The record gives the reactivity of an RNA of 177 nucleotides to DMS. DMS adducts were read by reverse transcription with MarathonRT. The RNA was probed in 150 mM KOAc, 10 mM MgCl2 and 150 mM bicine (pH 8.5) at 24 C. For DMS, 815 sequencing reads were counted. It was measured as part of the RMDB library TTRDEL.
RNA sequence: GGGAACGACUCGAGUAGAGUCGAAAAGAUAUGGAAAGCGAGGAUCAACUACACCGAAGAACUCGGAAACGAGGGAGGUGGGUUGGGAGCUUUCCUAAGUCAAAAGGACGGUCUUCGGACCGUCCAAUCUAAAAACGCUGUUCGCAGCGUUUUUAGAAAAAGAAACAACAACAACAAC
Reactivity to DMS in 0.01 (KOAc 150mM, MgCl2 10mM, bicine 150mM(pH8.5), 24C), signal-to-noise 1, nucleotides 027 to 126: g000a030u000a300u010g000g010a040a010a010g000c010g010a080g010g030a080u000c010a020a010c010u000a130c000a010c000c000g000a050a150g010a200a280c000u010c010g000g000a060a110a090c000g000a020g000g000g010a060g000g030u000g010g030g000u000u010g000g000g010a060g000c000u000u000u020c000c000u000a000a060g000u000c020a060a080a160a190g010g010a010c030g000g020u000c010u000u030c220g040g030a010c000c000g040u000c010c010a010a000